[RMDB]
RNA sequence: GGGAACGACUCGAGUAGAGUCGAAAAGACAUAGCUGGCAUCCACGCCGUAUGUCAUGGACUGAUUAUGAAGGAACGAUUAGCCGAACACACGGUCAGCACAAGGACUCUGACGUACUUUGUAGCGCCGUGCGAGGUACGUUCGCGUACCUCGCACGAAAAGAAACAACAACAACAAC
Reactivity to DMS in 0.01 (KOAc 150mM, MgCl2 10mM, bicine 150mM(pH8.5), 24C), signal-to-noise 2, nucleotides 027 to 126: g010a040c040a030u000a030g030c040u010g040g030c040a100u010c150c170a110c150g020c010c010g000u000a010u000g010u000c010a100u030g010g010a040c040u000g020a080u000u000a100u000g010a130a110g010g010a030a110c110g000a110u020u000a070g000c030c000g000a140a050c110a100c140a090c050g020g000u000c070a080g000c040a050c060a010a010g020g000a040c020u000c140u010g000a070c230g000u000a110c040u010u010u000g010u000a050g000c000g020c030
Reactivity to 2A3 in 0.01 (KOAc 150mM, MgCl2 10mM, bicine 150mM(pH8.5), 24C), signal-to-noise 2, nucleotides 027 to 126: g040a000c010a010u040a020g250c100u140g110g000c040a090u120c110c010a080c150g010c000c010g070u020a010u030g000u000c030a070u100g010g000a060c060u070g020a050u070u110a070u190g190a130a070g050g000a180a040c110g070a140u090u080a020g000c040c020g030a100a020c070a000c000a000c090g020g000u060c100a020g000c010a010c000a020a010g020g000a000c010u070c150u210g070a050c110g040u100a220c030u000u120u090g020u030a040g000c010g000c000
Chemical mapping of a 177-nucleotide RNA with DMS and 2A3. It was measured as part of the RMDB library OK2TST. DMS adducts were read by reverse transcription with MarathonRT. Reactivities are rounded to 0.1 and cut off at 0 and 3. Values cover nucleotides 27 to 126. For DMS, 1,732 sequencing reads were counted. The reactions ran in a buffer of 150 mM KOAc, 10 mM MgCl2 and 150 mM bicine (pH 8.5), at 24 C.